[RMDB]
RNA sequence: GGGAACGACUCGAGUAGAGUCGAAAACACACAUGGGUGCGGCAGCAAUCCUGCCAUCCGGUGUUGUUUUUUGGCAGUCGCGCUGCGCUAACGCAACCGCUCCUGCUACAGCAGAAAACAGCUCUCAUCAAGAAUAAACGUUCGCGUUUAUUCUUGAAAAAGAAACAACAACAACAAC
Reactivity to DMS in 0.01 (KOAc 150mM, MgCl2 10mM, bicine 150mM(pH8.5), 24C), signal-to-noise 4, nucleotides 027 to 126: c040a030c010a040c020a030u020g010g000g030u000g010c260g010g020c010a020g010c160a220a150u010c240c010u000g000c010c000a030u000c010c010g000g000u000g010u000u010g020u000u000u000u000u000u000g010g000c010a010g020u000c130g000c100g010c070u000g000c020g010c260u010a100a140c060g020c010a020a040c110c020g010c020u000c080c000u000g010c010u010a100c240a110g020c070a080g000a090a030a070a110c170a060g000c030u000c010u010c040a220
Reactivity to 2A3 in 0.01 (KOAc 150mM, MgCl2 10mM, bicine 150mM(pH8.5), 24C), signal-to-noise 2, nucleotides 027 to 126: c020a000c010a010c010a160u170g000g010g020u080g090c180g110g000c020a000g000c030a010a160u080c000c010u000g000c000c000a000u000c020c010g040g000u030g000u010u130g030u030u040u000u000u050u040g030g000c010a020g000u020c010g010c000g000c020u020g000c000g010c150u170a290a070c050g000c020a020a000c020c010g000c010u010c010c000u000g060c000u070a120c040a030g060c020a010g140a080a100a010a000c050a040g030c010u000c010u000c030a070